[RMDB]
RNA sequence: GGGAACGACUCGAGUAGAGUCGAAAACCCGGGCUCUGUCCUAGUGGCGAACGGGAGCUUAGGGCAUUGCCCGGUGAUGUACAGUCCCUUUCCACAACGUUGGAGAUGAAGCUGGGCUUUCGAGUCUCACGCUGAAUCGGUUCGCCGAUUCAGCGUGAAAAGAAACAACAACAACAAC
Reactivity to 2A3 in 0.01 (KOAc 150mM, MgCl2 10mM, bicine 150mM(pH8.5), 24C), signal-to-noise 1, nucleotides 027 to 126: c020c000c030g000g010g000c010u000c000u000g060u000c000c000u070a090g040u210g130g030c050g020a050a140c220g060g110g120a070g000c010u040u070a000g000g000g000c000a000u000u030g000c030c000c000g000g000u010g010a070u060g040u080a010c060a020g070u090c040c000c000u060u000u000c070c030a080c040a300a080c090g070u050u010g000g000a070g000a020u160g060a080a040g060c060u010g000g000g000c000u000u090u020c000g100a040g010u010c020u000